[RMDB]
RNA sequence: GGGAACGACUCGAGUAGAGUCGAAAAAACCACUGGAUGUAACGCAGCGGGAAGGGAAGGGCAAACAGCACGACGGCCACCACCAGCGGACGCCAGUUGCGUUUGACCAACGCCAGUGCCAGCAGGCAAGUAAUAGCCAGUUCGCUGGCUAUUACUUAAAAGAAACAACAACAACAAC
Reactivity to DMS in 0.01 (KOAc 150mM, MgCl2 10mM, bicine 150mM(pH8.5), 24C), signal-to-noise 4, nucleotides 027 to 126: a060a050c070c000a080c060u000g010g000a080u010g010u010a050a060c070g010c050a050g010c020g000g010g000a120a090g010g000g000a100a120g020g010g010c060a050a050a060c110a100g030c060a020c070g020a080c080g000g000c030c020a080c040c040a090c080c050a050g020c040g000g010a060c060g000c020c040a050g000u020u000g030c020g000u010u000u010g010a060c100c080a070a070c080g000c000c090a040g000u000g010c010c030a080g030c070a070g000g010c090
Reactivity to 2A3 in 0.01 (KOAc 150mM, MgCl2 10mM, bicine 150mM(pH8.5), 24C), signal-to-noise 2, nucleotides 027 to 126: a000a010c040c000a020c020u010g040g050a100u080g050u240a090a030c050g010c020a020g010c050g040g000g070a080a080g060g000g020a050a080g010g030g000c030a100a100a020c040a080g080c060a010c080g090a030c020g050g000c010c000a020c000c000a020c000c010a020g000c020g030g010a000c000g010c020c000a020g020u060u060g000c000g000u010u020u110g030a080c000c040a060a030c040g000c030c000a050g010u020g090c020c000a070g080c050a060g110g000c020
Structure probing data (DMS and 2A3) for a 177-nucleotide construct. It was measured as part of the RMDB library OK2TST. The DMS profile rests on 4,540 reads. For DMS the reverse transcriptase was MarathonRT. In probing experiments dimethyl sulfate is read out at A N1 and C N3, which are open when not base-paired. For 2A3 the reverse transcriptase was SuperScript II with manganese. The reactions ran in a buffer of 150 mM KOAc, 10 mM MgCl2 and 150 mM bicine (pH 8.5), at 24 C.